[RMDB]
RNA sequence: GGGAACGACUCGAGUAGAGUCGAAAAGUUGGGGGUUGGGACUUAGUUGGCUGAUUGAGGAACAAUGCGUCAACCUGGGUUCUCCUGAUGAAGGCGGCAGGUGGAGACGGAUCCGGGUCCGGGACCCCACUAUAAACCAUUUCGAUGGUUUAUAGUGAAAAGAAACAACAACAACAAC
Reactivity to 2A3 in 0.01 (KOAc 150mM, MgCl2 10mM, bicine 150mM(pH8.5), 24C), signal-to-noise 9, nucleotides 027 to 126: g080u080u060g030g000g000g000g020u060u050g030g010g000a000c010u040u060a050g020u030u040g020g010c050u050g070a090u040u060g040a140g080g070a120a060c030a050a040u110g080c020g020u010c010a020a020c010c030u020g050g000g000u060u020c040u040c010c000u060g050a140u110g050a070a040g040g010c020g010g020c040a020g020g050u060g030g050a080g010a020c030g010g000a000u020c020c010g020g010g010u010c030c000g020g020g030a050c000c000c000
Reactivity to DMS in 0.01 (KOAc 150mM, MgCl2 10mM, bicine 150mM(pH8.5), 24C), signal-to-noise 9, nucleotides 027 to 126: g010u010u010g010g000g010g000g010u010u010g010g000g010a070c070u010u010a080g010u010u000g010g010c040u010g020a070u000u000g000a190g010g010a110a140c060a050a040u010g010c060g000u000c020a050a030c030c040u000g000g010g010u010u010c010u000c010c010u010g000a110u020g000a110a060g000g010c100g000g000c030a040g000g020u010g010g010a110g010a090c090g000g010a050u010c040c040g000g000g010u000c020c030g020g000g000a090c010c000c010
The data come from the RNA Mapping Database (RMDB), libraries RFM100 and RFMREP. Structure probing data (2A3 and DMS) for a 177-nucleotide construct. High DMS reactivity at an A or C suggests that its Watson-Crick edge is free. 2A3 adducts were read by reverse transcription with SuperScript II with manganese.